[RMDB]
Chemical mapping of a 177-nucleotide RNA with 2A3 and DMS. The DMS profile rests on 5,136 reads.

RNA sequence: GGGAACGACUCGAGUAGAGUCGAAAACAAAACAAAAAGAUAGCAAAGCACGCAUGCUAUCAGAGAUAAAAUAAGCAAGCGCGCUUGCUUAGAAAACAAAACAAAACAAAAACAAAACAAAACAAAACGUAUGUAUAAAGUUCGCUUUGUGCGUACGAAAAGAAACAACAACAACAAC
Reactivity to 2A3 in 0.01 (KOAc 150mM, MgCl2 10mM, bicine 150mM(pH8.5), 24C), signal-to-noise 5, nucleotides 027 to 126: c000a000a030a000a010c040a020a070a040a000a020g040a030u040a000g000c000a010a080a000g060c010a010c060g050c020a020u010g000c000u000a000u030c030a000g030a000g000a020u130a010a100a010a020u040a030a000g000c000a030a000g000c060g000c010g010c000u000u000g010c000u020u010a020g080a010a100a010a000c090a020a070a000a010c060a020a060a010a000c060a020a090a020a000a000c060a020a050a000a000c050a010a090a000a000c030a010a070a000a000
Reactivity to DMS in 0.01 (KOAc 150mM, MgCl2 10mM, bicine 150mM(pH8.5), 24C), signal-to-noise 3, nucleotides 027 to 126: c040a090a090a080a110c140a080a100a060a150a070g000a030u010a000g000c010a030a030a080g000c020a010c040g040c030a190u010g010c000u000a000u010c030a090g020a100g020a090u010a000a090a090a050u010a030a040g020c020a000a030g020c020g010c070g000c020u000u000g000c030u000u000a020g000a020a110a050a110c180a050a070a070a020c150a060a040a100a080c120a050a040a030a080a040c140a020a060a050a130c150a050a010a090a060c130a010a020a060a030